[RMDB]
RNA sequence: GGGAACGACUCGAGUAGAGUCGAAAACAUGCGAUGACGCCUUCAUCGCGUGAGCGGCGUGUACCUGAAGCGGACAUCUUGCCAAACGAAAUGCUGACCGAGAUACCCUGAAGUAGCUUGCUAAUAGUUUUCGGGUAACUUUCGAGUUACCCGAAAAAAAAGAAACAACAACAACAAC
Reactivity to DMS in 0.01 (KOAc 150mM, MgCl2 10mM, bicine 150mM(pH8.5), 24C), signal-to-noise 3, nucleotides 027 to 126: c040a020u000g030c060g020a000u020g000a080c300g000c160c110u020u000c020a010u000c020g010c000g020u000g010a140g000c090g010g000c040g000u000g010u010a010c050c050u000g000a130a050g020c050g020g000a060c070a060u010c050u000u030g000c020c050a020a090a070c150g000a040a110a070u010g010c040u000g000a030c050c050g010a070g030a080u020a110c010c000c010u020g020a100a050g000u010a090g010c100u000u000g000c060u000a090a100u050a100g000
Reactivity to 2A3 in 0.01 (KOAc 150mM, MgCl2 10mM, bicine 150mM(pH8.5), 24C), signal-to-noise 3, nucleotides 027 to 126: c010a020u020g000c010g000a010u010g030a040c100g060c020c060u070u010c000a000u020c000g000c000g000u000g010a030g020c020g000g000c010g020u040g050u120a160c020c020u040g090a030a000g060c000g040g030a030c010a030u020c030u010u080g040c010c000a090a080a000c060g040a060a080a010u090g000c000u010g030a060c020c010g030a020g000a090u100a080c000c000c000u020g010a030a010g030u070a030g010c010u020u070g020c070u070a070a040u050a180g070